[RMDB]
RNA sequence: GGGAACGACUCGAGUAGAGUCGAAAAGAUAUGGAUUUCAACACGCGAGUUCAAUGAUGUCACAUCGGAAACGAUGUGAUUGAGAACUCGUUGAGAAUCCUAAGUCAAAGGCGACUUCGGUCGCCAAGUGUAGCUAUAACUUCGGUUAUAGCUACACAAAAGAAACAACAACAACAAC
Reactivity to DMS in 0.01 (KOAc 150mM, MgCl2 10mM, bicine 150mM(pH8.5), 24C), signal-to-noise 4, nucleotides 027 to 126: g010a070u000a300u010g000g000a020u000u000u010c010a020a220c180a300c200g010c020g000a030g010u010u010c000a260a230u010g000a120u000g010u000c000a010c000a020u010c000g000g000a130a090a180c010g020a010u000g010u000g020a000u000u000g010a120g000a000a000c000u000c000g000u000u000g000a140g000a010a030u000c000c000u010a070a200g000u010c030a100a140a150g000g010c010g010a020c010u000u010c230g040g000u000c000g020c000c000a010a010
Reactivity to 2A3 in 0.01 (KOAc 150mM, MgCl2 10mM, bicine 150mM(pH8.5), 24C), signal-to-noise 4, nucleotides 027 to 126: g060a000u090a050u150g010g000a030u130u300u210c050a070a030c040a010c270g020c010g000a020g020u000u020c110a240a300u260g020a010u090g050u020c000a000c000a010u000c010g060g000a100a060a030c010g000a010u000g000u000g000a000u000u000g000a000g000a000a000c000u000c000g010u000u000g000a000g020a000a000u000c000c000u020a140a040g060u020c070a120a070a090g000g010c010g000a000c000u030u130c300g170g000u000c020g000c020c000a010a000
Notes:
Chemical mapping of a 177-nucleotide RNA with DMS and 2A3. For 2A3 the reverse transcriptase was SuperScript II with manganese. The RNA was probed in 150 mM KOAc, 10 mM MgCl2 and 150 mM bicine (pH 8.5) at 24 C. For 2A3, 11,899 sequencing reads were counted. Source: RMDB library TTRDES, as collected in RNAgym.